[RMDB]
RNA sequence: GGGAACGACUCGAGUAGAGUCGAAAAGAUGGAGGGUCAGGCCUCGGACCCCUCCUAUAAGAUGUAACUAUUACGAGGCCAUUAAUGGCGUUUUCGCCUAGGUGCACGACGGCGUGCGUGACACCGUAAGACUUAAUGAAUAACACGCCGGAUACAAGGUAUAUGAUGCGUUCGCGCAUCAUAUACCAAAAGAAACAACAACAACAAC
Reactivity to 2A3 in 0.01 (KOAc 150mM, MgCl2 10mM, bicine 150mM(pH8.5), 24C), signal-to-noise 1, nucleotides 027 to 156: g190a030u140g060g020a000g000g000g000u000c040a000g000g000c000c000u000c000g000g000a010c040c090c040c000u030c050c010u050a070u020a100a010g030a010u250g030u210a060a040c170u110a120u100u050a030c000g000a010g000g000c000c000a000u030u100a020a140u070g000g010c000g130u070u040u180u300c030g000c050c000u000a020g000g000u000g000c020a000c030g000a000c000g020g000c000g030u030g000c000g000u000g100a040c000a000c000c030g070u010a060a000g010a000c020u030u230a060a000u220g210a110a060u170a120a030c030a000c000g000c000c020g050g070a010u040a000c040a030a130